Structure probing data (DMS and 2A3) for a 170-nucleotide construct.
It was measured as part of the RMDB library 15KLIB.
Conditions: 150 mM KOAc, 10 mM MgCl2 and 150 mM bicine (pH 8.5), 24 C.
For DMS the reverse transcriptase was MarathonRT.

RNA sequence: GGGAACGACUCGAGUAGAGUCGAAAAAUGCAGAUUAUGGGUGUGGUUAUGCAGAGUGGUGUGAGAAAAGUUACAUAUGGUACUGCGCAUUGGUUGUUUGCGACCCUUGUCUCAACCUAUGUGAUAAAGCGUCCGACGUUCGCGUCGGACAAAAGAAACAACAACAACAAC
Reactivity to DMS in 0.01 (KOAc 150mM, MgCl2 10mM, bicine 150mM(pH8.5), 24C), signal-to-noise 3, nucleotides 027 to 129: a120u060g030c060a000g010a160u020u000a090u040g010g010g030u030g050u120g000g000u020u000a060u030g050c040a140g010a050g030u030g050g040u040g040u060g010a080g020a070a030a100a090g000u090u000a080c070a080u070a070u080g040g030u030a090c120u010g040c150g060c050a040u040u000g020g000u030u020g060u000u050u030g020c120g020a030c060c050c050u000u040g010u020c040u030c010a100a020c070c050u000a050u040g010u000g020a070u000a060a060a100g000c140
Reactivity to 2A3 in 0.01 (KOAc 150mM, MgCl2 10mM, bicine 150mM(pH8.5), 24C), signal-to-noise 2, nucleotides 027 to 129: a000u140g010c090a000g040a090u000u030a100u230g040g030g000u000g040u040g020g040u030u020a000u020g040c050a010g020a000g050u060g050g060u050g000u000g000a080g120a020a170a020a000g000u020u130a020c020a000u020a020u160g030g020u030a050c060u020g060c000g000c020a000u000u000g010g000u000u000g000u020u090u140g030c000g000a030c000c010c030u000u040g050u000c010u000c090a110a110c040c010u030a020u020g040u010g000a070u060a070a200a080g050c000